The record gives the reactivity of an RNA of 177 nucleotides to DMS and 2A3. The RNA was probed in 150 mM KOAc, 10 mM MgCl2 and 150 mM bicine (pH 8.5) at 24 C.
RNA sequence: GGGAACGACUCGAGUAGAGUCGAAAACAACAAGCGAUUCCAGUCGCUGAACUCAAACAUCUCUAAUGAGCAUGAUGCCCCAAAUCAUGGCUCAUAUUCGGCGAGGAGUUCAUUCGUCAAUUUAGAGCAUACUAGGCACCUUCGGGUGCCUAGUAUGAAAAGAAACAACAACAACAAC
Reactivity to DMS in 0.01 (KOAc 150mM, MgCl2 10mM, bicine 150mM(pH8.5), 24C), signal-to-noise 6, nucleotides 027 to 126: c160a130a160c120a080a010g010c020g010a050u010u030c200c260a190g010u000c000g000c000u010g000a120a100c120u040c140a090a100a120c150a100u030c010u000c030u010a040a040u020g020a010g010c010a010u010g000a000u000g010c040c010c010c030a060a280a020u010c010a000u000g010g030c010u000c010a020u010a030u010u030c110g010g000c020g000a040g010g000a190g000u020u010c070a130u030u000c010g010u010c010a060a040u000u000u030a040g000a050g000
Reactivity to 2A3 in 0.01 (KOAc 150mM, MgCl2 10mM, bicine 150mM(pH8.5), 24C), signal-to-noise 5, nucleotides 027 to 126: c070a020a000c030a050a030g040c000g030a010u290u100c150c020a070g090u010c010g000c020u020g020a060a020c060u050c100a070a100a070c030a150u080c020u010c000u080a120a000u010g000a000g000c000a000u000g010a010u070g050c020c010c000c020a060a140a000u000c000a020u020g180g000c010u000c000a000u010a000u050u090c020g000g010c000g020a020g030g030a070g170u220u070c030a100u080u030c020g030u020c010a050a060u080u140u210a050g000a000g000